[RMDB]
RNA sequence: GGGAACGACUCGAGUAGAGUCGAAAACGAGGAAGGCCUAGCCGCUGCUGCUGCCAGGAAUUCCAGGUUGGAGGGGCGGCAACCUCCUGCCAGCCUUCAGGCCACUCUCCUGUGCCUGCCAGAAGAGCCUCAGGAAAUGUUUCGACAUUUCCUGAGGAAAAGAAACAACAACAACAAC
Reactivity to DMS in 0.01 (KOAc 150mM, MgCl2 10mM, bicine 150mM(pH8.5), 24C), signal-to-noise 1, nucleotides 027 to 126: c120g000a090g020g000a080a040g020g020c030c050u000a120g030c020c080g020c040u020g000c100u000g000c000u000g030c020c000a020g000g000a210a160u000u000c040c030a010g030g020u000u000g010g010a040g000g010g000g000c010g000g010c050a020a100c120c020u000c010c020u010g010c030c050a120g000c010c050u000u010c070a100g010g010c070c060a150c070u000c090u000c050c040u000g000u000g010c030c000u000g010c210c010a040g020a060a000g000a110g010
Reactivity to 2A3 in 0.01 (KOAc 150mM, MgCl2 10mM, bicine 150mM(pH8.5), 24C), signal-to-noise 1, nucleotides 027 to 126: c010g000a080g060g030a030a150g020g020c010c020u000a000g000c000c010g120c020u130g090c040u030g000c000u000g000c090c000a020g060g030a040a120u280u090c030c030a030g100g000u010u000g020g090a040g000g010g060g000c030g020g000c040a000a100c010c000u010c020c030u070g090c000c000a010g000c010c070u070u070c060a030g010g030c030c000a030c010u120c000u000c030c000u020g000u040g010c010c010u050g050c000c000a090g000a160a010g050a080g010